Structure probing data (DMS and 2A3) for a 207-nucleotide construct. For DMS, 3,201 sequencing reads were counted. For 2A3, 1,175 sequencing reads were counted.
RNA sequence: GGGAACGACUCGAGUAGAGUCGAAAAGAAGACCGACCACGUGGAGAUCGUCACCCAGGCAUCAGUCGACAUCGCAGCAGGGGAAACCCGGCCGGCCAUCCCGCUGUGCAGCGACCGCCGCGCGACUGUCGUGGACCGCCCCGUGGUGGACGGCCUAUAGAGAGAGGAAUUUCGAUUCCUCUCUCUAAAAAGAAACAACAACAACAAC
Reactivity to DMS in 0.01 (KOAc 150mM, MgCl2 10mM, bicine 150mM(pH8.5), 24C), signal-to-noise 1, nucleotides 027 to 156: g010a120a110g020a180c010c040g010a240c010c010a020c060g010u030g020g010a160g010a040u010c040g000u000c020a110c020c020c030a120g000g020c040a100u000c080a050g010u010c000g030a110c010a140u000c030g040c040a260g030c010a110g020g030g030g000a080a090a140c030c000c000g030g040c010c010g000g010c010c020a120u010c010c000c010g050c000u000g010u000g030c000a190g000c000g020a050c010c010g020c040c020g010c100g020c020g000a070c020u000g050u000c030g030u000g010g010a050c050c000g000c010c010c030c030g000u010g000g020u010g030g010a070c010g000g000c000c010u000a290
Reactivity to 2A3 in 0.01 (KOAc 150mM, MgCl2 10mM, bicine 150mM(pH8.5), 24C), signal-to-noise 2, nucleotides 027 to 156: g150a040a010g100a070c000c020g030a000c000c000a000c020g060u220g050g040a150g030a190u200c030g050u070c080a120c040c030c030a020g040g030c020a030u040c030a090g020u030c030g030a060c020a120u170c020g000c000a010g020c020a070g000g000g000g000a010a000a050c040c070c020g060g000c040c020g000g040c000c000a040u020c020c000c000g010c040u020g030u050g020c090a030g050c010g040a040c050c070g110c030c030g030c040g040c020g060a040c060u070g030u100c050g080u110g050g010a020c010c040g040c010c020c010c020g020u050g010g000u020g000g010a010c000g000g010c000c000u080a110